[RMDB]
RNA sequence: GGGAACGACUCGAGUAGAGUCGAAAAGGGGUCUUCGUCGUCCAACAGCGCAGUUGUCAGCUCUGAAGCCUCCACGGAGCUUGGAUUUACUGCGACAUGGACGGCGAAGACGGAGGCACCCAAAAUAGUAUUUGGCUGUUCGCAGCCAAAUACUAAAGGUAGUAGUGGGAUUCGUCCCACUACUACCAAAAGAAACAACAACAACAAC
Reactivity to 2A3 in 0.01 (KOAc 150mM, MgCl2 10mM, bicine 150mM(pH8.5), 24C), signal-to-noise 2, nucleotides 027 to 156: g110g000g020g000u040c010u000u000c030g010u010c000g030u020c020c020a210a080c090a210g110c000g000c000a030g000u070u090g110u210c040a010g030c000u000c010u010g040a100a040g000c000c000u000c000c000a040c010g000g010a010g000c040u070u130g130g000a160u160u210u290a050c000u000g000c000g040a030c020a180u140g010g000a000c000g000g000c000g010a000a000g000a000c010g000g000a000g000g000c000a020c000c000c010a110a070a020a010u040a010g010u000a000u000u000u000g010g000c000u010g020u110u080c260g000c110a000g000c000c000a000a000a000u000a010c010u000a000a030a020
This 207-nucleotide RNA was probed chemically with 2A3.
Reactivities are rounded to 0.1 and cut off at 0 and 3.
2A3 adducts were read by reverse transcription with SuperScript II with manganese.
Values cover nucleotides 27 to 156.